[RMDB]
RNA sequence: GGGAACGACUCGAGUAGAGUCGAAAACUAUCCUCUGCUGUGCCUUCCAUUGGCCAAAUCCUAUGAAACCAGAGGACAAGAAAACCUUUUGAUUCAGUUCAUGAUAGUUGGAAUCCCCAGACAUGGAGUAGGGGGAUAGAAGGUAGAGAUGGGUAAACACAGGGCAAAUGUUCGCAUUUGCCCUGUGAAAAGAAACAACAACAACAAC
Reactivity to 2A3 in 0.01 (KOAc 150mM, MgCl2 10mM, bicine 150mM(pH8.5), 24C), signal-to-noise 2, nucleotides 027 to 156: c030u010a020u030c010c010u000c060u090g000c030u010g040u090g140c030c020u130u090c020c020a250u090u210g070g040c000c020a080a000a000u060c010c080u140a050u150g060a060a030a040c020c000a000g030a010g000g070a010c070a030a040g120a000a120a030a090c000c000u040u080u050u120g090a090u090u110c080a020g060u000u020c040a040u090g040a120u060a060g100u000u050g010g000a030a010u020c060c010c000c000a030g010a030c050a060u260g080g020a090g090u160a060g080g010g000g000g000a000u000a000g010a030a000g010g010u060a000g000a010g000a180u160g020g020g000u130a040a060a080